[RMDB]
An RNA of 177 nucleotides, treated with 2A3 and DMS and read out base by base.
The 2A3 profile rests on 988 reads.
It was measured as part of the RMDB library OK2TST.
High 2A3 reactivity points to a flexible backbone, as in loops and unpaired stretches.
Conditions: 150 mM KOAc, 10 mM MgCl2 and 150 mM bicine (pH 8.5), 24 C.
RNA sequence: GGGAACGACUCGAGUAGAGUCGAAAAAAGAUGAAGAUGCUUCUUCUGAGUGUGAUGUAGAAGAGGAAACGUCAGUUGAUGAAGCUCAGGCCAUUAUCACUGCACCAUUGUCACUGUCCAUUCAGGAGUCCUGCUUGUUUUUCGAAACAAGCAGGACAAAAGAAACAACAACAACAAC
Reactivity to 2A3 in 0.01 (KOAc 150mM, MgCl2 10mM, bicine 150mM(pH8.5), 24C), signal-to-noise 1, nucleotides 027 to 126: a010a000g070a050u130g020a040a010g010a060u080g020c040u040u040c030u010u030c030u000g040a010g030u120g040u090g010a070u050g020u140a020g010a270a010g090a000g000g060a100a090a010c060g030u060c060a070g010u080u110g040a030u020g000a000a020g000c010u060c090a030g040g060c010c010a070u130u000a040u020c050a040c010u050g000c000a040c010c020a060u050u050g010u070c000a010c070u000g020u000c020c000a050u140u050c000a020g030g000a000
Reactivity to DMS in 0.01 (KOAc 150mM, MgCl2 10mM, bicine 150mM(pH8.5), 24C), signal-to-noise 1, nucleotides 027 to 126: a090a020g010a040u000g010a100a140g000a050u010g010c040u000u000c020u010u000c010u010g000a110g030u000g050u010g010a070u010g000u000a110g030a050a060g000a260g020g000a020a020a040c190g030u020c010a030g020u020u010g000a050u010g000a070a150g020c030u000c180a130g020g010c010c070a050u010u000a030u020c020a050c030u000g010c040a050c010c000a060u000u010g010u000c030a040c030u020g040u000c010c010a060u000u010c070a040g000g000a290